[RMDB]
RNA sequence: GGGAACGACUCGAGUAGAGUCGAAAAAAGAUCAACGAGGCUGUUGGUCAUGAAACCAUUAGUGUUCCUUCCAGAAAAGAAGAGAUAUUGGAUACACACCAAGUCAGGGCAGCAAAAGCCUGUGGAGCUUUGCGCCCUGGUUCGCCAGGGCGCAAAGAAAAGAAACAACAACAACAAC
Reactivity to DMS in 0.01 (KOAc 150mM, MgCl2 10mM, bicine 150mM(pH8.5), 24C), signal-to-noise 2, nucleotides 027 to 126: a030a000g000a040u010c020a040a000c010g000a180g010g010c150u080g000u000u000g000g040u000c000a050u000g000a110a020a170c000c020a150u050u040a050g060u000g000u000u000c010c030u000u010c000c090a080g000a110a030a070a050g010a080a030g030a110g000a030u020a070u010u000g000g020a140u000a070c070a000c160a080c010c050a080a060g000u010c010a120g030g000g010c050a150g000c190a040a040a050a050g010c040c010u010g000u010g000g000a200g000
Reactivity to 2A3 in 0.01 (KOAc 150mM, MgCl2 10mM, bicine 150mM(pH8.5), 24C), signal-to-noise 2, nucleotides 027 to 126: a000a010g000a000u000c000a000a010c000g040a080g300g070c280u110g070u000u010g000g010u020c020a000u060g010a030a010a010c000c000a040u060u270a120g120u130g010u010u000c030c000u020u020c030c000a040g180a110a140a050a000g180a120a010g060a040g080a020u040a190u140u060g000g000a000u070a130c050a010c010a020c100c030a010a000g010u030c000a000g000g010g000c040a100g030c030a080a100a040a000g000c000c000u030g040u120g010g030a040g050
Structure probing data (DMS and 2A3) for a 177-nucleotide construct. Source: RMDB library OK1LIB, as collected in RNAgym. The DMS profile rests on 1,940 reads. 2A3 adducts were read by reverse transcription with SuperScript II with manganese. Values cover nucleotides 27 to 126.